Notes
Structure probing data (2A3) for a 177-nucleotide construct. The reactions ran in a buffer of 150 mM KOAc, 10 mM MgCl2 and 150 mM bicine (pH 8.5), at 24 C. Values cover nucleotides 27 to 126.

RNA sequence: GGGAACGACUCGAGUAGAGUCGAAAAAGUCCUAGGCAUUGUUCCAGCAUCUGAUGUAGAAGCAAUGGCGCAGUCCUAGGCAUCGACGGUGUCGAAGCAAUGGCGUAGACCUCAGGCACCGAGUAUGCCAAUCGCAGAUGUUCGCAUCUGCGAUUGGAAAAGAAACAACAACAACAAC
Reactivity to 2A3 in 0.01 (KOAc 150mM, MgCl2 10mM, bicine 150mM(pH8.5), 24C), signal-to-noise 1, nucleotides 027 to 126: a000g140u050c000c000u000a010g000g050c070a000u010u010g030u030u000c030c010a030g070c000a090u000c000u110g220a300u290g200u300a020g020a150a000g000c030a110a210u070g020g000c000g000c020a000g000u000c000c000u010a010g000g000c000a040u080c000g160a170c010g020g030u010g000u020c010g070a010a010g000c070a000a050u300g010g020c140g130u160a100g020a110c000c000u010c030a020g000g000c010a000c000c000g010a070g040u060a090u020g070